[RMDB]
Record summary: Chemical mapping of a 177-nucleotide RNA with 2A3 and DMS. As a SHAPE reagent, 2A3 marks flexible, mostly unpaired nucleotides at the ribose 2'-OH. Source: RMDB library TTRDES, as collected in RNAgym.
RNA sequence: GGGAACGACUCGAGUAGAGUCGAAAAGAUAUGGAACCAUCUAGCGUUGAAACUAGGUCUCGGAAACGAGACUAGUGGAGCUAGUAUGGUUCCUAAGUCAAAACAAUGUGUGUUCGCACACAUUGAAGCUUACAGGAAUGUUCGCAUUCCUGUAAGCAAAAGAAACAACAACAACAAC
Reactivity to 2A3 in 0.01 (KOAc 150mM, MgCl2 10mM, bicine 150mM(pH8.5), 24C), signal-to-noise 4, nucleotides 027 to 126: g010a000u060a020u100g000g010a000a010c010c000a000u000c000u010a000g010c020g300u300u220g110a030a020a000c000u030a040g300g180u030c010u000c000g010g020a040a030a030c000g000a010g040a000c000u010a000g000u000g000g020a050g010c010u010a010g030u050a010u000g000g000u010u010c000c000u000a000a000g000u000c020a000a010a070a150c010a010a010u000g010u010g010u010g020u070u120c300g020c130a000c000a000c000a010u000u010g010a040a020
Reactivity to DMS in 0.01 (KOAc 150mM, MgCl2 10mM, bicine 150mM(pH8.5), 24C), signal-to-noise 4, nucleotides 027 to 126: g020a050u010a300u010g000g010a010a010c000c000a020u000c000u010a000g010c000g020u000u030g040a210a160a030c000u000a010g000g000u010c010u000c000g000g000a060a070a190c010g000a010g000a100c010u000a000g000u010g000g020a080g010c000u000a010g000u010a010u000g000g010u000u000c000c000u000a010a080g010u000c030a100a120a180a280c010a010a010u000g020u010g010u000g010u000u010c300g010c000a000c000a000c000a010u000u000g010a080a150